[RMDB]
RNA sequence: GGGAACGACUCGAGUAGAGUCGAAAAAAUUCAUUGGGUUGCAACACUGGAAAACAAAGGUUUGCCUAUGCUGAUAGGUACACAGCAUCAUUUGGUCAGUGCAGGAAUCAGGGUCUAUAUCACCUGCAUUUCCGCUACCAUUCGUGGUAGCGGAAAUAAAAGAAACAACAACAACAAC
Reactivity to DMS in 0.01 (KOAc 150mM, MgCl2 10mM, bicine 150mM(pH8.5), 24C), signal-to-noise 1, nucleotides 027 to 126: a090a010u000u020c060a060u010u000g020g000g000u000u000g030c060a040a040c060a050c050u000g030g000a070a060a070a040c070a040a100a110g010g010u000u000u000g030c000c030u000a040u000g030c110u010g000a090u000a040g010g000u000a040c210a060c060a100g010c070a050u000c080a090u000u000u000g000g000u000c080a080g030u000g000c040a030g000g030a060a080u000c090a050g000g000g000u010c110u000a090u000a080u000c080a080c010c030u000g010c060
This 177-nucleotide RNA was probed chemically with DMS.
Source: RMDB library OK2TRN, as collected in RNAgym.